[RMDB]
RNA sequence: GGGAACGACUCGAGUAGAGUCGAAAAUCCCCAUAACGCUGGAGACAUCCUGGAAGGGGAAAGAGGAUGGGUGGAAGAGAAGGAGGCGGGCCCCCCGAUCCGAGGGGCCCGGCGGCCAAGUUUGGAAAGCACUCCGGGCCGAAGGGUUGAGAGCACCGUUCUCUAGUAAGUUCGCUUACUAGAGAACAAAAGAAACAACAACAACAAC
Reactivity to 2A3 in 0.01 (KOAc 150mM, MgCl2 10mM, bicine 150mM(pH8.5), 24C), signal-to-noise 1, nucleotides 027 to 156: u010c000c000c010c010a100u200a160a010c060g000c040u040g020g000a060g000a030c010a040u040c030c020u040g020g070a060a050g020g010g000g070a000a090a020g020a000g050g000a040u030g030g040g040u120g040g080a090a090g000a010g030a050a080g030g040a010g030g050c000g000g000g010c000c000c010c010c010c020g010a030u000c100c050g000a020g000g020g000g000c030c010c010g000g010c020g010g010c010c000a060a000g010u080u100u140g060g030a070a070a000g020c010a030c130u000c030c120g020g000g000c030c010g020a020a010g060g000g000u070u110g040a020g020a010g020c060a030c080c080